RNA sequence: GGGAACGACUCGAGUAGAGUCGAAAAGCUGCGGUGAACCAAGUGCGUGCGGGCUCGUCACCACCGAAGAGGGUGCCCUCGCCGCACUGUACGACAGGGGAGGUGCACAGUGGGGUGACGGUGGUGCUACCUUCCAAUUGUUCGCAAUUGGAAGGUAAAAAGAAACAACAACAACAAC
Reactivity to DMS in 0.01 (KOAc 150mM, MgCl2 10mM, bicine 150mM(pH8.5), 24C), signal-to-noise 7, nucleotides 027 to 126: g010c040u000g020c050g010g000u000g000a080a110c080c080a100a080g010u000g010c050g020u000g020c030g000g000g010c080u000c070g010u000c000a020c000c000a070c020c030g000a090a120g010a190g000g000g020u000g000c010c020c000u000c010g020c010c010g000c070a060c070u000g000u000a060c150g000a090c110a120g010g010g000g010a050g010g000u010g010c010a010c040a090g020u000g010g010g000g010u000g000a090c030g000g010u000g000g010u000g010c190
Reactivity to 2A3 in 0.01 (KOAc 150mM, MgCl2 10mM, bicine 150mM(pH8.5), 24C), signal-to-noise 6, nucleotides 027 to 126: g020c020u050g020c020g050g050u060g050a060a050c030c010a100a040g070u030g060c040g030u060g010c010g020g020g000c050u050c070g080u070c010a010c020c010a070c010c020g030a110a050g090a090g110g250g010u050g000c010c010c000u020c030g170c020c000g010c020a020c010u020g020u070a080c100g110a050c050a130g000g020g040g000a030g000g020u150g020c020a010c010a050g080u130g030g030g000g000u020g010a020c010g000g000u020g000g000u020g000c010